[RMDB]
The data come from the RNA Mapping Database (RMDB), libraries RFM100 and RFMREP.
Structure probing data (2A3 and DMS) for a 177-nucleotide construct.
RNA sequence: GGGAACGACUCGAGUAGAGUCGAAAAUGUAUAUGUGUUCCUAUUCAAACAAUGCAAUUCCUAAAUGGUAGAAGAUGUUGCGAAGCCAGUACCGCCUGGCGAUGAAAUGGCGGACGAAUUAGCAACACUUGCGUAUCACUUUCGAGUGAUACGCAAGAAAAGAAACAACAACAACAAC
Reactivity to 2A3 in 0.01 (KOAc 150mM, MgCl2 10mM, bicine 150mM(pH8.5), 24C), signal-to-noise 4, nucleotides 027 to 126: u070g030u030a040u030a030u100g070u010g030u060u130c070c060u080a110u050u130c120a080a060a070c010a030a010u060g000c000a000a110u030u030c000c000u140a200a100a040u060g000g020u040a020g030a120a020g080a110u080g000u010u000g000c020g030a050a000g050c010c010a020g010u090a280c000c030g000c000c000u080g110g090c120g000a010u050g020a060a070a050u100g000g000c000g010g010a020c010g020a010a040u130u090a020g000c000a000a020c000a010
Reactivity to DMS in 0.01 (KOAc 150mM, MgCl2 10mM, bicine 150mM(pH8.5), 24C), signal-to-noise 3, nucleotides 027 to 126: u000g010u000a020u020a070u000g020u000g000u000u010c080c060u010a050u010u040c170a040a040a110c090a050a040u000g010c020a090a130u020u000c000c000u020a020a080a270u020g030g040u000a050g000a180a140g000a080u010g000u000u000g000c030g020a130a140g020c030c030a030g020u000a060c000c000g020c000c000u020g000g040c140g010a090u030g000a080a110a100u010g000g030c000g000g020a030c020g010a020a030u000u000a300g000c010a030a000c000a080
The reactions ran in a buffer of 150 mM KOAc, 10 mM MgCl2 and 150 mM bicine (pH 8.5), at 24 C.
DMS adducts were read by reverse transcription with MarathonRT.